[RMDB]
The record gives the reactivity of an RNA of 177 nucleotides to DMS.
It was measured as part of the RMDB library OK2TST.
DMS adducts were read by reverse transcription with MarathonRT.
RNA sequence: GGGAACGACUCGAGUAGAGUCGAAAAUUUAUUUUGAGGUUGAAGGCGUGCAUCCGCAUGACGUUGGCCAGUUUUUGGAUGCGCAAGGAAUUGCGAUUCGCGUUGGACAUCAUUGUGCUCAGCCGAAACUCAUGGACGCAUUCGUGCGUCCAUGAGUAAAAGAAACAACAACAACAAC
Reactivity to DMS in 0.01 (KOAc 150mM, MgCl2 10mM, bicine 150mM(pH8.5), 24C), signal-to-noise 1, nucleotides 027 to 126: u000u020u000a050u020u000u000u010g000a100g020g020u000u000g020a100a200g010g020c070g020u000g000c070a090u000c010c130g000c120a050u000g000a060c030g020u000u000g000g000c000c000a060g010u000u000u000u000u000g000g060a080u000g020c000g020c000a000a030g000g030a140a100u000u040g010c010g000a080u000u000c000g010c180g020u000u000g010g000a060c030a020u020c110a080u000u000g020u000g000c050u000c050a160g010c000c030g000a090a090